[RMDB]
RNA sequence: GGGAACGACUCGAGUAGAGUCGAAAAAAGAUACCUAUAAUAACCUUUGCAAGGAUUCUCACUUUAAUUUCCUGCAUUUCUGUGCUGACUCUGCCCUCUUAUACCUUUAGUGAGAUUGACAUAUGGUUCCCAGUAGUGGAUCAACUGGAGGUUCCAAGAUAGUGAGCAUAUUCGUAUGCUCACUAUCAAAAGAAACAACAACAACAAC
Reactivity to 2A3 in 0.01 (KOAc 150mM, MgCl2 10mM, bicine 150mM(pH8.5), 24C), signal-to-noise 3, nucleotides 027 to 156: a000a020g120a050u130a080c040c020u080a060u060a300a040u080a090a070c010c020u050u060u110g030c080a070a060g030g020a050u140u050c030u080c070a040c030u090u130u220a130a170u060u120u080c020c030u020g030c030a060u010u170u030c070u060g050u050g050c010u020g030a020c020u030c070u110g040c000c020c000u060c010u040u060a080u100a140c040c010u080u100u070a010g020u010g040a150g000a080u010u130g050a010c020a010u080a040u050g060g000u020u000c000c000c000a000g000u010a010g000u040g050g020a050u030c010a000a050c020u010g030g010a000g070g040u070u060c070c010a040a020
Reactivity to DMS in 0.01 (KOAc 150mM, MgCl2 10mM, bicine 150mM(pH8.5), 24C), signal-to-noise 2, nucleotides 027 to 156: a050a080g000a170u010a140c010c010u010a180u010a090a150u000a070a060c020c020u000u000u010g010c050a070a120g030g020a090u000u010c050u040c050a070c060u020u000u000a070a090u000u010u000c020c020u010g030c020a110u000u010u010c060u000g010u010g030c050u000g030a060c020u000c070u000g030c020c010c020u030c050u000u000a120u000a050c000c030u000u000u000a090g020u000g020a130g010a080u000u010g020a110c050a100u010a080u000g010g010u000u000c000c010c010a160g030u000a110g030u010g000g010a060u000c040a050a060c080u010g010g000a140g010g020u000u000c030c020a060a300
The record gives the reactivity of an RNA of 207 nucleotides to 2A3 and DMS. The data come from the RNA Mapping Database (RMDB), library OK3TST. For 2A3, 1,065 sequencing reads were counted. The DMS profile rests on 4,006 reads. The RNA was probed in 150 mM KOAc, 10 mM MgCl2 and 150 mM bicine (pH 8.5) at 24 C. 2A3 adducts were read by reverse transcription with SuperScript II with manganese.